RNA sequence: GGGAACGACUCGAGUAGAGUCGAAAACGUGUGUGGAGGCAUAUACGACUGUACUUCGGUAUAGGAUGGCUCGAACAUGUUCCGAGCGCGCGCGAGGCGUAGAUGGUGGGCGGGCCCAUGUACGCGAGAACUCGUGUGCAAAUAAAUAGAACAUGAGGAUAUAUAAAUAUUUCGAUAUUUAUAUAUCAAAAGAAACAACAACAACAAC
Reactivity to 2A3 in 0.01 (KOAc 150mM, MgCl2 10mM, bicine 150mM(pH8.5), 24C), signal-to-noise 3, nucleotides 027 to 156: c020g020u040g010u000g020u040g040g050a080g030g010c050a070u080a020u040a100c040g040a040c040u030g010u030a010c000u010u050c100g030g010u030a020u030a040g040g060a100u160g100g000c000u010c000g030a230a070c020a000u000g000u000u000c000c010g000a010g000c040g000c000g000c010g000c000g000a010g000g000c000g000u010a010g000a100u000g000g020u020g000g010g020c140g010g030g000c000c010c010a010u050g050u020a000c000g010c030g020a070g070a130a040c000u000c000g000u000g010u010g000c000a000a000a010u040a000a010a000u040a010g000a000a000c000a000u010g010a010g030
Reactivity to DMS in 0.01 (KOAc 150mM, MgCl2 10mM, bicine 150mM(pH8.5), 24C), signal-to-noise 1, nucleotides 027 to 156: c050g000u010g000u010g000u000g010g010a140g030g020c050a110u000a070u000a060c040g040a080c040u000g000u000a020c010u010u010c170g020g030u000a030u000a030g010g010a100u000g040g010c000u000c020g030a070a170c000a030u000g010u000u000c020c000g010a070g090c060g100c000g030c010g050c020g010a030g010g000c020g040u000a030g010a040u000g020g040u000g000g010g010c070g000g000g000c150c010c020a020u000g000u000a000c010g010c020g010a140g000a090a300c010u000c000g070u010g060u000g020c010a060a040a070u010a090a040a110u000a100g000a010a030c010a000u000g020a220g020
Conditions: 150 mM KOAc, 10 mM MgCl2 and 150 mM bicine (pH 8.5), 24 C. Chemical mapping of a 207-nucleotide RNA with 2A3 and DMS. Reactivities are given for positions 27 through 156. The 2A3 profile rests on 3,707 reads.